[RMDB]
RNA sequence: GGGAACGACUCGAGUAGAGUCGAAAAGCCAAGUCUGGGGGCCGAUGAGGGUUGGCUCAAAGUAGGGUUUUGACUUGAAAACUCAAGCUGUGACCCCAAAACGAUGGAGGUAAAUGAGAAUCCUCCUAAAACUAUGGACACUUCGGUGUCCAUAGAAGACUUCUAUUCGGUUCGCCGAAUAGAAGUCAAAAGAAACAACAACAACAAC
Reactivity to 2A3 in 0.01 (KOAc 150mM, MgCl2 10mM, bicine 150mM(pH8.5), 24C), signal-to-noise 2, nucleotides 027 to 156: g020c000c000a040a030g120u060c040u060g000g000g010g040g070c000c020g040a030u070g070a080g060g090g030u100u060g000g050c010u010c070a020a050a030g020u040a090g020g090g010u020u040u040u040g080a090c010u010u010g030a060a050a170a220c090u040c060a010a010g050c010u020g040u120g190a130c030c030c000c020a050a050a000a010c090g040a060u140g000g030a010g030g030u030a060a180a150u270g000a080g030a060a050u040c000c000u000c010c010u020a020a020a000a000c000u000a000u000g000g000a000c010a000c010u010u060c210g050g010u000g000u000c000c000a010u000a000g000a000a000

The data come from the RNA Mapping Database (RMDB), library M2RFPK. Structure probing data (2A3) for a 207-nucleotide construct. The RNA was probed in 150 mM KOAc, 10 mM MgCl2 and 150 mM bicine (pH 8.5) at 24 C. Values cover nucleotides 27 to 156. Reactivities are rounded to 0.1 and cut off at 0 and 3.